[RMDB]
RNA sequence: GGGAACGACUCGAGUAGAGUCGAAAAGUAGCCGCUGCGGUCUCUGGCUCCUGUCUGGAGGCCUGUCGGCGUCUUAAUGCAGGAUGGGCCUAACGCUUCGGUCCGGAGCGGACAGCCGAGAUCAAUCGGGCUAAGCCGACCGGCUCUUGCCGGUUCCGUUUAGAAUGACGUUCGCGUCAUUCUAAACAAAAGAAACAACAACAACAAC
Reactivity to 2A3 in 0.01 (KOAc 150mM, MgCl2 10mM, bicine 150mM(pH8.5), 24C), signal-to-noise 2, nucleotides 027 to 156: g100u020a000g010c030c020g080c280u260g030c130g040g020u000c000u000c050u210g050g010c020u110c010c060u070g040u070c040u100g100g120a000g000g000c000c020u040g010u040c000g020g010c000g000u010c010u080u300a220a160u280g010c000a030g000g130a020u030g000g000g000c000c000u050a130a010c040g010c030u000u010c040g180g050u040c160c130g010g000a000g000c010g020g000a040c010a000g000c000c010g000a000g000a000u060c060a050a030u080c000g000g010g000c000u040a090a000g020c020c020g010a020c000c000g010g040c020u080c100u300u300g000c000c000g000g010u070u030c000c010

This 207-nucleotide RNA was probed chemically with 2A3. 2A3 adducts were read by reverse transcription with SuperScript II with manganese. The 2A3 profile rests on 869 reads. Reactivities are given for positions 27 through 156.